[RMDB]
An RNA of 177 nucleotides, treated with DMS and 2A3 and read out base by base. For 2A3 the reverse transcriptase was SuperScript II with manganese. The data come from the RNA Mapping Database (RMDB), library OK1LIB. The 2A3 profile rests on 3,304 reads. Values are in units of 0.01, from 0 to 300, in steps of 10.
RNA sequence: GGGAACGACUCGAGUAGAGUCGAAAACUGGAAGGGCGUGACCUACGAUCUAGAGUCAGAUGGGAAGGGCUCUGUUAAGAUCGACAGAGUGCAGUCUCAGAUGGUCCAGACAACCGGCGAGAUACACGUAUGGUCUCUGGUUCGCCAGAGACCAUACAAAAGAAACAACAACAACAAC
Reactivity to DMS in 0.01 (KOAc 150mM, MgCl2 10mM, bicine 150mM(pH8.5), 24C), signal-to-noise 2, nucleotides 027 to 126: c020u010g050g000a010a090g000g000g000c050g020u000g000a090c020c020u020a080c040g000a050u020c090u010a060g010a070g010u000c020a020g010a260u060g000g010g000a000a070g020g000g030c010u000c000u000g020u020u000a110a050g010a070u000c100g020a060c010a010g000a040g000u000g050c090a030g000u020c010u010c030a040g000a110u010g000g000u010c050c030a090g000a060c140a110a050c050c020g000g000c080g000a040g000a080u050a050c250a080c190
Reactivity to 2A3 in 0.01 (KOAc 150mM, MgCl2 10mM, bicine 150mM(pH8.5), 24C), signal-to-noise 5, nucleotides 027 to 126: c050u070g040g010a050a040g090g000g000c070g080u100g010a090c000c010u060a040c070g080a060u010c030u070a040g010a020g080u020c000a020g020a230u080g030g000g070a040a050g040g010g000c000u000c000u010g040u070u090a130a040g050a190u120c070g040a050c030a030g030a000g030u080g070c040a020g050u000c000u000c020a030g020a150u060g030g010u020c010c010a030g020a080c040a030a030c010c000g000g000c020g010a070g010a040u120a110c080a010c080